[RMDB]
RNA sequence: GGGAACGACUCGAGUAGAGUCGAAAACGGCAGGCACCCGGUCUGGUCCAGGAAUGUCUUGACGAACUCAGGCGUGUGCAGCGGGUGCAGUUCUUUCACUGGAUCACCUCCAUAUUGAACAUGUUCGGCCCCAUCUCAGCCACUGCCGGGAACGGAAUCCACCAUACUGGUUCGCCAGUAUGGUGGAAAAAGAAACAACAACAACAAC
Reactivity to 2A3 in 0.01 (KOAc 150mM, MgCl2 10mM, bicine 150mM(pH8.5), 24C), signal-to-noise 1, nucleotides 027 to 156: c010g010g000c000a050g050g040c000a000c040c000c070g020g020u070c050u030g060g010u080c010c060a110g010g120a230a180u220g070u090c060u110u090g070a100c080g040a100a140c050u060c060a030g020g040c000g040u140g040u080g060c040a060g000c030g000g040g010u060g010c000a000g000u000u000c000u030u020u010c060a050c030u010g060g000a060u080c080a090c030c030u080c000c000a020u050a000u250u000g000a000a000c070a160u120g060u050u100c030g050g010c030c010c000c020a080u110c040u000c030a010g000c000c010a050c020u010g010c010c000g010g000g030a050a020c060g000g100a070a050